Structure probing data (2A3) for a 207-nucleotide construct. The reactions ran in a buffer of 150 mM KOAc, 10 mM MgCl2 and 150 mM bicine (pH 8.5), at 24 C.
RNA sequence: GGGAACGACUCGAGUAGAGUCGAAAAGACAGGAGAUAUCAUCUUGAUGUCAUGGGGUGCUGAUAUGUCACAAUCUGGCGGAGCUGGUGGACACGUUGGUGUCAUGAUGGAUGCUACAUACUUUAUCAGUUGCGACUAUUCAACACAAGGAGCAGUACCAUCUCGAGACUUUCGAGUCUCGAGAUGGAAAAGAAACAACAACAACAAC
Reactivity to 2A3 in 0.01 (KOAc 150mM, MgCl2 10mM, bicine 150mM(pH8.5), 24C), signal-to-noise 1, nucleotides 027 to 156: g060a020c130a040g040g090a030g010a010u070a060u080c090a010u020c020u110u200g100a070u000g010u040c020a050u060g000g040g000g000u080g000c010u000g000a040u000a090u210g030u040c010a020c050a080a120u050c060u040g010g000c090g070g010a010g000c000u010g060g060u060g030g030a000c000a000c040g070u100u150g040g000u000g000u040c050a070u100g040a060u130g110g000a020u030g010c000u070a080c100a220u080a030c040u170u140u040a140u300c060a060g010u040u020g040c000g000a000c000u080a080u020u110c100a070a050c010a030c000a140a090g060g000a010g020c000a000g090u020a060